[RMDB]
RNA sequence: GGGAACGACUCGAGUAGAGUCGAAAACGAGUGCAAUAAAGACGCGGUUGCCGAUCGGUAUGGAUGCCACCGUGACGGCUCAAUCGCACAAGUGCCAACGAUAACGAGGCGCUCGCUAUUGCUGCGUAAAAGCGACGAUCGUUCGCGAUCGUCGCAACCACAGGUGACAGUUCGCUGUCACCUGUGGAAAAGAAACAACAACAACAAC
Reactivity to 2A3 in 0.01 (KOAc 150mM, MgCl2 10mM, bicine 150mM(pH8.5), 24C), signal-to-noise 2, nucleotides 027 to 156: c040g020a050g080u110g060c040a000a040u030a040a180a030g140a010c030g040c000g000g010u000u020g000c010c010g010a050u010c010g010g050u110a120u160g150g100a200u210g130c120c060a010c000c000g010u000g130a130c030g000g040c010u030c080a000a000u010c010g000c020a020c030a060a000g000u000g000c000c010a120a050c070g130a160u150a200a010c100g010a140g000g000c010g000c000u020c030g030c020u010a030u010u030g000c080u140g000c020g060u100a060a070a060a060g030c030g000a000c000g000a000u010c010g010u100u060c180g000c010g070a000u000c000g000u000c000g000c000a000a000
Chemical mapping of a 207-nucleotide RNA with 2A3. It was measured as part of the RMDB library M2RFPK. 2A3 is a SHAPE reagent: it acylates the 2'-hydroxyl of flexible nucleotides of all four kinds. The reactions ran in a buffer of 150 mM KOAc, 10 mM MgCl2 and 150 mM bicine (pH 8.5), at 24 C. For 2A3, 1,030 sequencing reads were counted.